[RMDB]
RNA sequence: GGGAACGACUCGAGUAGAGUCGAAAAAAUGCUGCCGGUUCGCUGGAGCCGAAGGAUGGCGGUUUCGAGCUGGCGCUUGCAACGGCGGAUGUGAAACAGGGCGCGCUUUCGGCUCAUCUGGCCGCUACGGUAUUACUCCAUUCGUGGAGUAAUACCGAAAAGAAACAACAACAACAAC
Reactivity to 2A3 in 0.01 (KOAc 150mM, MgCl2 10mM, bicine 150mM(pH8.5), 24C), signal-to-noise 2, nucleotides 027 to 126: a000a010u100g010c010u020g000c020c010g070g070u150u120c110g020c240u230g180g010a010g000c010c010g010a020a010g070g030a110u170g170g010c030g020g010u000u040u030c030g010a050g030c010u030g150g010c030g020c040u040u130g070c010a020a000c020g050g000c000g040g050a110u100g080u090g070a020a060a030c010a040g120g170g020c060g030c000g020c040u000u030u010c000g010g010c010u000c020a010u010c000u010g020g000c000c010g000c010u050a030
Reactivity to DMS in 0.01 (KOAc 150mM, MgCl2 10mM, bicine 150mM(pH8.5), 24C), signal-to-noise 2, nucleotides 027 to 126: a060a060u000g010c000u000g030c040c000g000g000u000u000c190g020c280u020g020g010a050g000c000c000g000a020a020g000g010a100u010g030g030c010g020g010u000u000u010c010g000a070g020c000u010g000g010c030g020c010u010u010g010c140a090a140c030g000g000c010g000g010a070u010g010u010g010a010a020a030c020a110g020g010g010c040g010c030g000c020u000u000u000c020g000g000c010u000c000a060u010c040u000g000g010c010c040g000c010u010a080